[RMDB]
The record gives the reactivity of an RNA of 177 nucleotides to DMS and 2A3. For DMS, 824 sequencing reads were counted. Conditions: 150 mM KOAc, 10 mM MgCl2 and 150 mM bicine (pH 8.5), 24 C. Reactivities are given for positions 27 through 126. The data come from the RNA Mapping Database (RMDB), library RFM100. For DMS the reverse transcriptase was MarathonRT.
RNA sequence: GGGAACGACUCGAGUAGAGUCGAAAACUACCUGUAGCUCACAGUCACAGCUAUUAGAGCUGUCCUUGCUUCUUUGGGUUUACUGUUUUAGUUAAUUAGUUACCCUAUGAAAGUCUGAUCCUUCAGAUCGGUUGAAGUGGUUCGCCACUUCAACCGAAAAAGAAACAACAACAACAAC
Reactivity to DMS in 0.01 (KOAc 150mM, MgCl2 10mM, bicine 150mM(pH8.5), 24C), signal-to-noise 1, nucleotides 027 to 126: c080u020a110c190c050u020g030u030a100g000c020u010c100a090c090a100g000u050c240a000c020a150g040c030u000a100u010u030a070g010a000g000c000u000g000u000c250c070u000u000g000c300u000u000c000u000u000u000g000g000g010u000u010u030a020c110u000g000u000u040u000u000a200g000u040u010a080a020u040u000a110g140u020u000a030c010c010c010u000a030u000g000a100a130a210g000u000c030u070g020a030u000c030c050u000u000c030a020g000a190
Reactivity to 2A3 in 0.01 (KOAc 150mM, MgCl2 10mM, bicine 150mM(pH8.5), 24C), signal-to-noise 2, nucleotides 027 to 126: c000u020a100c000c000u050g010u020a020g010c080u000c000a070c000a030g030u070c120a000c040a030g010c010u000a030u060u250a130g100a050g070c000u000g000u000c030c030u100u030g030c030u000u220c000u000u030u030g070g000g000u070u300u050a010c010u000g130u020u010u020u020a100g030u040u190a140a110u000u030a060g050u080u000a070c000c000c000u060a160u170g080a090a030a000g000u030c070u050g060a060u050c040c020u000u080c000a030g000a300